The record gives the reactivity of an RNA of 207 nucleotides to 2A3 and DMS. For DMS the reverse transcriptase was MarathonRT. For DMS, 8,589 sequencing reads were counted. For 2A3, 12,656 sequencing reads were counted. Source: RMDB library M2RFPK, as collected in RNAgym. The reactions ran in a buffer of 150 mM KOAc, 10 mM MgCl2 and 150 mM bicine (pH 8.5), at 24 C.
RNA sequence: GGGAACGACUCGAGUAGAGUCGAAAACGGUUACGCCUUCUUUACCGUUAUCAAGGAAGGUACUCGGCCAUGCUAAGGGAAGCAUUAUUCCUUAGGCGCAUGUGGCCGCCAGCAUGGUGUGAGGGGAAAAAGUAUGCUGGGUUCGCCCAGCAUACAACUACAAUACUGACUUCGGUCAGUAUUGUAGAAAAGAAACAACAACAACAAC
Reactivity to 2A3 in 0.01 (KOAc 150mM, MgCl2 10mM, bicine 150mM(pH8.5), 24C), signal-to-noise 7, nucleotides 027 to 156: c000g000g000u030u040a030c070g010c000c000u000u000c010u020u030u050a030c010c020g230u120u100a050u090c080a010a000g040g000a000a000g000g000u050a050c010u000c000g030g000c000c000a000u010g000c020u110a120a140g020g000g010a010a010g030c080a230u110u130a150u160u120c010c010u040u100a090g010g000c010g020c030a080u220g090u210g280g040c060c010g000c010c000a000g000c000a000u010g000g020u090g120u170g050a030g010g010g030g060a020a110a010a050a000g000u000a000u000g000c000u000g000g020g020u020u040c170g080c030c000c000a000g000c000a000u000a000c000a000a000
Reactivity to DMS in 0.01 (KOAc 150mM, MgCl2 10mM, bicine 150mM(pH8.5), 24C), signal-to-noise 3, nucleotides 027 to 156: c010g000g030u000u000a030c030g020c000c000u000u000c010u010u000u000a040c000c030g010u010u020a050u000c110a040a030g000g020a040a020g000g020u000a030c010u000c000g030g000c000c000a030u000g020c010u000a140a180g010g000g020a030a080g000c140a150u000u000a140u000u000c010c010u000u010a180g030g030c020g000c070a130u010g030u000g040g010c040c000g000c020c060a080g000c000a050u010g020g020u000g000u000g010a060g000g020g020g000a050a060a100a110a150g020u000a010u000g010c000u020g010g000g020u000u010c300g040c010c000c000a020g010c000a010u000a000c000a040a100